[RMDB]
RNA sequence: GGGAACGACUCGAGUAGAGUCGAAAAUUGAGUGAAGUUCUCUGUGUAGAACAAUACCUUCUGCUCUGCUUCUCCCAGCUUUCACUGAGGGCUGGAAAAGGACAGGCCUGUCCAGCUGUACUGUCCCACUGUGUAUGGGGAAGCUCAGGCUCUGGUAAGUAAUAAAAUAGUUCGCUAUUUUAUUACUAAAAGAAACAACAACAACAAC
Reactivity to 2A3 in 0.01 (KOAc 150mM, MgCl2 10mM, bicine 150mM(pH8.5), 24C), signal-to-noise 4, nucleotides 027 to 156: u110u080g010a030g030u060g040a230a060g030u050u010c030u020c100u110g160u090g070u300a020g020a050a010c010a060a070u080a090c020c000u060u070c090u080g030c020u030c050u080g010c030u030u000c050u060c000c000c010a010g010c020u040u100u110c090a140c140u110g020a070g040g020g020c010u020g000g000a020a050a070a050g030g040a030c030a030g030g110c020c020u050g020u060c040c020a020g000c040u030g050u150a080c030u070g100u130c010c050c010a080c060u130g030u040g020u180a080u070g020g000g000g020a020a010g000c020u010c020a020g010g000c020u000c020u110g020g000u020a070
Reactivity to DMS in 0.01 (KOAc 150mM, MgCl2 10mM, bicine 150mM(pH8.5), 24C), signal-to-noise 2, nucleotides 027 to 156: u010u020g010a130g020u020g000a130a220g030u010u000c000u000c010u020g020u000g030u000a030g000a000a060c030a120a160u000a100c040c040u010u000c020u010g000c020u000c020u000g010c010u000u010c030u000c040c010c010a060g030c070u000u000u000c040a160c070u000g020a100g010g010g020c020u000g010g000a000a010a030a070g020g010a150c070a100g020g020c050c020u010g020u010c020c040a090g060c020u000g030u000a080c020u000g000u000c000c000c010a090c050u000g050u000g010u000a100u000g020g030g020g000a030a040g030c010u000c020a050g030g000c050u000c010u010g000g010u020a090